This 177-nucleotide RNA was probed chemically with DMS and 2A3.
The 2A3 profile rests on 3,647 reads.
Values cover nucleotides 27 to 126.
It was measured as part of the RMDB library TTRDEL.
Conditions: 150 mM KOAc, 10 mM MgCl2 and 150 mM bicine (pH 8.5), 24 C.
2A3 adducts were read by reverse transcription with SuperScript II with manganese.
[RMDB]
RNA sequence: GGGAACGACUCGAGUAGAGUCGAAAAGAUAUGGACGAAGAACUCGAACUACGUCAUCCAUUCGGAAACGAAUGGAGACGCGAGGGAGUCCUAAGUCAAAAGACAGCAAUGUUCGCAUUGCUGUCAAGUCCACUUUUACGUUCGCGUAAAAGUGGACAAAAGAAACAACAACAACAAC
Reactivity to DMS in 0.01 (KOAc 150mM, MgCl2 10mM, bicine 150mM(pH8.5), 24C), signal-to-noise 2, nucleotides 027 to 126: g000a070u000a290u010g000g010a000c000g030a230a040g020a100a110c000u020c010g020a110a180c080u010a260c010g000u000c000a100u000c000c000a000u000u000c010g000g000a100a130a160c000g000a000a000u000g000g000a020g000a010c000g010c010g000a010g000g000g010a070g010u000c010c000u020a030a170g000u000c030a040a100a130a130g010a000c000a020g000c000a040a000u000g000u000u000c200g010c000a010u000u000g000c000u000g000u000c000a010a080
Reactivity to 2A3 in 0.01 (KOAc 150mM, MgCl2 10mM, bicine 150mM(pH8.5), 24C), signal-to-noise 2, nucleotides 027 to 126: g000a000u140a050u140g030g000a010c030g150a290a190g030a070a020c010u000c010g040a140a110c100u200a050c300g000u010c020a300u010c010c000a020u020u000c000g000g080a060a050a070c010g000a000a000u010g000g000a000g020a010c000g010c030g000a010g020g030g030a020g000u000c020c000u030a130a030g040u030c000a010a000a000a220g000a010c010a000g000c000a000a020u000g020u070u050c120g020c110a000u000u010g000c000u000g010u000c000a000a010